An RNA of 177 nucleotides, treated with 2A3 and DMS and read out base by base.
Source: RMDB library OK2TRN, as collected in RNAgym.
2A3 adducts were read by reverse transcription with SuperScript II with manganese.
The RNA was probed in 150 mM KOAc, 10 mM MgCl2 and 150 mM bicine (pH 8.5) at 24 C.
RNA sequence: GGGAACGACUCGAGUAGAGUCGAAAAGGGACGAGUUGGAUUUUUUCCGUGAGAACGGAAGGGGUCUAGCUCAAUGGCGUGCUCCUAGAAUUUCGGGAAGAGCUGAGUUCCGAACAGUACGCCAUGACUACAUCGUAGUAUUCGUACUAUGGUGUAGAAAAGAAACAACAACAACAAC
Reactivity to 2A3 in 0.01 (KOAc 150mM, MgCl2 10mM, bicine 150mM(pH8.5), 24C), signal-to-noise 6, nucleotides 027 to 126: g060g010g050a020c040g000a020g000u000u000g000g010a000u000u000u000u000u000u000c000c000g000u010g020a070g010a030a000c000g000g000a000a000g000g000g000g000u000c000u000a000g000c000u000c000a010a010u000g000g000c000g000u000g000c000u010c020c010u010a030g050a050a080u080u070u040c010g010g010g040a110a060g060a110g150c100u070g060a050g070u020u010c010c010g000a040a020c020a010g000u000a000c000g000c000c000a010u030g040a020
Reactivity to DMS in 0.01 (KOAc 150mM, MgCl2 10mM, bicine 150mM(pH8.5), 24C), signal-to-noise 9, nucleotides 027 to 126: g010g000g010a120c160g000a010g010u000u000g000g000a000u000u000u000u000u000u000c000c000g010u000g000a260g000a210a010c000g000g000a010a000g000g000g000g000u000c000u000a010g010c000u000c000a090a020u000g000g010c000g010u000g000c000u000c040c060u000a100g010a060a070u000u000u000c020g010g000g010a100a110g010a190g010c080u010g000a070g000u000u000c000c020g000a050a060c300a030g010u000a010c010g000c000c000a010u000g000a260